[RMDB]
Notes
Conditions: 150 mM KOAc, 10 mM MgCl2 and 150 mM bicine (pH 8.5), 24 C. Structure probing data (2A3 and DMS) for a 170-nucleotide construct. For 2A3, 112,921 sequencing reads were counted. 2A3 adducts were read by reverse transcription with SuperScript II with manganese. The DMS profile rests on 122,679 reads.
RNA sequence: GGGAACGACUCGAGUAGAGUCGAAAAUCUUCCUCCUUGCUGAGGAUCUUUCCUCCCGCGGAGAGCUGCUUCUUCUUGUUCUCGAGGGCCUUCCUUCUGCGGUGAUCCUCCCUCUCCUUGUCGGUGAUAAGACGAUAGUUCGCUAUCGUCAAAAGAAACAACAACAACAAC
Reactivity to 2A3 in 0.01 (KOAc 150mM, MgCl2 10mM, bicine 150mM(pH8.5), 24C), signal-to-noise 9, nucleotides 027 to 129: u050c020u040u020c000c000u050c010c010u140u190g050c160u120g060a020g010g010a030u020c040u030u090u030c010c010u050c010c010c010g020c030g010g010a050g000a010g040c070u080g030c010u070u080c000u080u010c000u100u200g080u120u030c050u020c040g010a070g010g020g010c000c000u060u060c010c000u050u070c030u060g030c020g050g000u050g020a030u010c000c000u010c000c000c000u020c000u010c000c020u030u050g070u070c040g030g010u050g050a080u070a190a050
Reactivity to DMS in 0.01 (KOAc 150mM, MgCl2 10mM, bicine 150mM(pH8.5), 24C), signal-to-noise 9, nucleotides 027 to 129: u000c060u000u000c010c020u010c000c010u000u040g020c120u050g010a070g020g030a000u030c070u000u000u000c030c000u000c050c030c040g000c090g000g000a060g000a100g050c140u010g000c090u030u040c020u020u010c060u010u050g010u020u010c000u000c030g020a100g000g000g000c110c060u050u010c040c020u000u040c020u000g040c100g070g000u030g020a070u020c040c020u010c030c020c020u010c020u020c030c060u010u000g040u030c050g000g010u000g030a070u030a070a130